[RMDB]
RNA sequence: GGGAACGACUCGAGUAGAGUCGAAAAGAACUUUGGCCGGCUCGGAAUAGAAUCAGGGGGUGCAAACUGCCCACUGGCAGAAAGGAUUAUAGCAAAUGCAUACCCUAUUGCAAUACAGCCCGGCCAACAUAGACUACUCUAUUCGUAGAGUAGUCAAACCUCUUACAUUCUUCGGAAUGUAAGAGGUAAAAGAAACAACAACAACAAC
Reactivity to 2A3 in 0.01 (KOAc 150mM, MgCl2 10mM, bicine 150mM(pH8.5), 24C), signal-to-noise 4, nucleotides 027 to 156: g020a030a000c000u040u010u010g000g000c010c020g010g000c020u050c080g020g030a100a080u150a150g050a050a040u220c080a040g020g000g000g000g000u020g000c010a050a040a110c020u020g000c020c040c040a140c150u150g000g000c020a010g070a060a100a050g140g040a070u160u080a130u260a200g110c060a030a090a060u040g000c010a010u190a300c000c000c000u060a060u040u070g040c040a070a050u040a090c020a030g060c040c040c020g000g000c020c000a000a000c000a010u030a010g000a000c000u000a000c010u000c000u010a030u110u050c100g060u060a000g000a000g000u000a000g000u000c000a000a000
Reactivity to DMS in 0.01 (KOAc 150mM, MgCl2 10mM, bicine 150mM(pH8.5), 24C), signal-to-noise 2, nucleotides 027 to 156: g000a080a180c040u020u000u010g010g000c000c020g000g020c040u000c100g000g060a250a140u000a110g010a120a120u010c050a090g030g000g020g000g130u010g000c070a040a100a120c040u020g050c030c000c130a150c130u000g030g040c060a050g000a300a140a150g010g010a150u000u010a130u000a100g020c040a050a070a150u000g010c040a040u000a040c000c010c000u000a090u000u000g000c010a040a130u000a180c040a080g040c100c000c000g030g000c010c000a000a010c070a070u000a180g020a040c010u000a020c000u000c000u000a060u000u000c250g020u000a010g020a040g000u010a010g000u000c000a020a050
Overview: Chemical mapping of a 207-nucleotide RNA with 2A3 and DMS. The DMS profile rests on 2,339 reads. Source: RMDB library M2RFPK, as collected in RNAgym. Conditions: 150 mM KOAc, 10 mM MgCl2 and 150 mM bicine (pH 8.5), 24 C. For 2A3, 2,130 sequencing reads were counted.